[RMDB]
RNA sequence: GGGAACGACUCGAGUAGAGUCGAAAAAUGUGCGGCAAAGAAACAUUGUUUAUGCAAAGGCACUUCGCAAUGUGUGCGCAAACAUUGCUUAUUCAAACACGCUUCACAAUGUGCGACAAAGAAACAUAAAACGUUUAGUACUUCGGUACUAAACGAACGAUGUCCACUACUUCGGUAGUGGACAUCGAAAAGAAACAACAACAACAAC
Reactivity to 2A3 in 0.01 (KOAc 150mM, MgCl2 10mM, bicine 150mM(pH8.5), 24C), signal-to-noise 2, nucleotides 027 to 156: a000u060g030u090g070c010g000g000c020a010a080a100g090a010a140a040c020a050u050u050g080u060u000u000a100u140g010c070a090a030a140g180g000c010a000c010u040u060c020g030c080a030a030u020g010u040g000u030g000c010g020c060a020a010a010c000a030u030u020g000c000u120u090a180u010u150c090a070a080a040c130a020c030g010c000u040u030c010a020c040a090a150u040g000u020g020c000g070a050c090a010a140a040g050a060a090a000c030a030u050a060a000a040a090c010g000u000u000u000a000g000u000a000c000u010u040c180g070g000u010a000c030u000a000a000a000c000g000a010a000